Annotation:
Structure probing data (2A3) for a 207-nucleotide construct. The 2A3 profile rests on 1,535 reads. It was measured as part of the RMDB library RNAMAK.
[RMDB]
RNA sequence: GGGAACGACUCGAGUAGAGUCGAAAAGGGGUCAACCGUCGUGGUCUCCCAGGAGCUUGGAUUUACCAGGCUGAAGCCUCCACGGCCUGGUUGUCAGCUCCUGUGAGAGACUCUUCGGUUGACGGAGGCACCCAAAACAGUCUGUUCGCAGACUGAAGAUUGCUUCCUUCUUCGGAAGGAAGCAAUCAAAAGAAACAACAACAACAAC
Reactivity to 2A3 in 0.01 (KOAc 150mM, MgCl2 10mM, bicine 150mM(pH8.5), 24C), signal-to-noise 1, nucleotides 027 to 156: g100g010g040g000u000c000a010a000c020c000g020u010c010g160u270g050g000u000c000u000c000c010c000a000g020g010a010g020c180u300u300g130g020a110u300u300u270a020c000c010a010g000g030c000u000g030a110a030g050c000c020u010c030c020a000c000g010g000c000c000u000g000g020u010u010g000u000c000a020g000c000u000c000c000u000g000u120g020a300g000a000g000a000c000u000c000u000u000c000g000g010u000u000g000a000c000g000g000a000g020g000c010a050c000c000c000a030a080a030a030c000a000g000u010c000u000g140u120u190c230g000c140a010g010a010c000u030g000a030a010